[RMDB]
RNA sequence: GGGAACGACUCGAGUAGAGUCGAAAACGUUGGCAUAACAUCCCUAUAGGCAUUAUUUUUUUUUUUAAUUUUGAUUAGUAUUUGAUUCCGCCAGCGCAUAUAAUGCAUUGAGCUAUUUAUGGAUGUACACCCUAAAUACGUUCGCGUAUUUAGGGUGAAAAGAAACAACAACAACAAC
Reactivity to 2A3 in 0.01 (KOAc 150mM, MgCl2 10mM, bicine 150mM(pH8.5), 24C), signal-to-noise 2, nucleotides 027 to 126: c050g000u010u010g020g020c030a030u030a130a020c000a000u010c000c000c010u030a040u050a100g020g010c000a000u030u010a050u020u030u020u020u020u000u050u010u000u030u110a270a040u250u130u160u070g040a080u020u120a060g040u180a200u110u070u110g080a060u020u020c000c040g010c010c020a020g000c020g000c050a010u050a000u030a090a010u020g000c010a010u100u100g050a060g040c020u030a050u020u170u050a030u120g060g030a000u000g010u000a010
Reactivity to DMS in 0.01 (KOAc 150mM, MgCl2 10mM, bicine 150mM(pH8.5), 24C), signal-to-noise 1, nucleotides 027 to 126: c030g010u030u010g010g050c020a210u030a170a000c060a000u000c010c000c020u020a070u010a020g010g000c020a020u000u000a000u000u000u000u000u000u010u000u000u020u000u010a090a050u020u000u070u010g000a090u020u030a090g020u030a030u030u010u010g000a100u030u020c020c010g010c000c000a030g020c030g040c150a070u030a020u020a000a010u020g020c040a100u000u040g000a280g020c020u000a000u020u000u030a050u000g000g010a030u030g000u000a300